[RMDB]
An RNA of 177 nucleotides, treated with 2A3 and read out base by base.
RNA sequence: GGGAACGACUCGAGUAGAGUCGAAAACAUCACAUUAAAGAACAAUCUAUAUAGAUUGGUUUGGCAUGUUGAGCGUAAAGACGUUCCAUAUCCUAAGCAAUCUAUUUUUACUAUUAAUAGUGUGGUCCUUCCCCUCUAUCUUCGGAUAGAGGGGAAGAAAAGAAACAACAACAACAAC
Reactivity to 2A3 in 0.01 (KOAc 150mM, MgCl2 10mM, bicine 150mM(pH8.5), 24C), signal-to-noise 2, nucleotides 027 to 126: c010a020u070c010a020c000a000u010u040a070a090a030g070a120a030c020a020a100u070c060u050a070u010a000u000a200g030a030u010u000g050g020u080u000u010g040g030c040a030u000g010u010u060g010a000g010c000g010u030a050a300a200g250a130c000g020u000u000c000c020a010u030a050u080c000c000u020a010a020g010c000a010a010u000c000u010a050u000u060u000u030u060a030c030u060a070u260u020a070a110u020a150g000u020g010u010g010g020u030c000